[RMDB]
RNA sequence: GGGAACGACUCGAGUAGAGUCGAAAAAUAAAGAGUUUCCAGGAACCAAAUAGGAACCAUAAGACUAGAAUAGGUGGUUCCUAUUUGGUUGACUUAACAAUUCCCUAGGAACCUGGAUGCAUAAAAACGUGCGUAUUAGAUUCGUCUAAUACGCACGAAAAGAAACAACAACAACAAC
Reactivity to 2A3 in 0.01 (KOAc 150mM, MgCl2 10mM, bicine 150mM(pH8.5), 24C), signal-to-noise 1, nucleotides 027 to 126: a010u200a020a040a030g060a020g080u000u100u000c010c000a000g020g010a000a000c000c020a000a000a000u020a020g000g000a000a000c000c000a000u030a180a090g130a130c050u100a060g300a290a280u190a210g250g000u010g000g000u000u000c000c000u010a000u000u000u020g000g000u000u000g000a000c020u000u020a040a000c000a000a100u020u020c010c010c000u000a050g000g100a090a060c000c010u000g030g030a060u050g050c040a140u230a220a130a000a020a000
Reactivity to DMS in 0.01 (KOAc 150mM, MgCl2 10mM, bicine 150mM(pH8.5), 24C), signal-to-noise 1, nucleotides 027 to 126: a140u000a070a070a100g030a110g000u000u000u000c030c010a000g000g020a090a050c010c020a000a020a020u010a030g020g000a010a010c000c000a050u010a100a090g000a200c120u020a100g010a120a100u000a050g020g010u000g000g010u000u010c000c000u000a000u000u000u000g000g000u010u000g000a050c020u000u000a020a080c180a090a120u000u000c000c000c000u010a170g000g000a050a140c010c000u020g010g010a140u020g000c090a070u000a070a030a060a100a120
Structure probing data (2A3 and DMS) for a 177-nucleotide construct. The reactions ran in a buffer of 150 mM KOAc, 10 mM MgCl2 and 150 mM bicine (pH 8.5), at 24 C. For DMS the reverse transcriptase was MarathonRT. The data come from the RNA Mapping Database (RMDB), library M2PK90.